[RMDB]
RNA sequence: GGGAACGACUCGAGUAGAGUCGAAAACUUUUCCCUACAGUUCGAGCGGUCGAACUAGAGGGGAGUGUAACCUUGGUACCGCCGUAGAAACAGGGUUACGACGUCUUACCGAGAUUCCAACUCGGCCCCUCUCAGAGGUGACUCUGAGCGAAAGGUCGUGCAAUGAUCAGUUCGCUGAUCAUUGCACAAAAGAAACAACAACAACAAC
Reactivity to 2A3 in 0.01 (KOAc 150mM, MgCl2 10mM, bicine 150mM(pH8.5), 24C), signal-to-noise 1, nucleotides 027 to 156: c010u100u100u040u070c010c030c030u050a110c070a050g000u020u000c000g000a010g000c060g030g020u070c000g020a030a010c000u020a030g040a010g120g010g010g010a110g080u190g000u050a000a000c000c000u000u000g000g030u020a050c000c010g130c010c010g230u230a070g140a060a230a000c010a000g000g010g010u000u000a000c040g010a030c000g080u060c110u140u160a100c000c000g020a000g050a140u190u050c040c010a050a080c010u000c000g050g000c000c020c000c000u000c010u000c000a000g010a040g000g010u080g030a040c020u000c000u040g010a000g020c060g130a100a030a000g010g080u070c070